[RMDB]
RNA sequence: GGGAACGACUCGAGUAGAGUCGAAAAACAUUUGUAGUUCCUUGACUUUCGUUCUCUGCCAGUGACGUGUCCAUUCGGCGCCAGCAGCCCACCCAUAGGUUGCAUAAUGGCAAAGAUGGGCAAAUACUCGAGUAUAAGCGUUCGCGCUUAUACUCGAAAAAGAAACAACAACAACAAC
Reactivity to DMS in 0.01 (KOAc 150mM, MgCl2 10mM, bicine 150mM(pH8.5), 24C), signal-to-noise 2, nucleotides 027 to 126: a030c100a120u040u040u000g010u040a050g050u000u000c000c000u000u010g020a060c090u000u000u080c050g000u040u000c000u000c010u010g000c110c020a090g000u000g000a050c300g010u000g050u000c000c000a000u020u010c010g050g050c300g000c000c010a050g000c020a050g000c000c000c000a030c210c170c090a030u020a060g000g000u000u000g000c070a020u050a050a150u000g020g000c000a040a300a060g000a010u000g000g000g040c000a010a040a080u010a010c150
Reactivity to 2A3 in 0.01 (KOAc 150mM, MgCl2 10mM, bicine 150mM(pH8.5), 24C), signal-to-noise 3, nucleotides 027 to 126: a000c080a110u100u120u210g140u110a030g010u010u020c000c000u030u070g030a070c060u010u050u060c020g000u050u040c020u000c010u030g070c020c010a070g010u040g090a040c060g100u050g000u010c020c000a020u160u180c020g010g010c000g000c000c000a000g010c010a000g000c000c020c000a070c060c010c000a080u250a120g010g000u000u010g020c000a010u140a110a130u120g000g000c000a000a010a000g010a000u000g000g010g000c000a000a020a000u050a020c020

The record gives the reactivity of an RNA of 177 nucleotides to DMS and 2A3. Conditions: 150 mM KOAc, 10 mM MgCl2 and 150 mM bicine (pH 8.5), 24 C. DMS adducts were read by reverse transcription with MarathonRT. High 2A3 reactivity points to a flexible backbone, as in loops and unpaired stretches.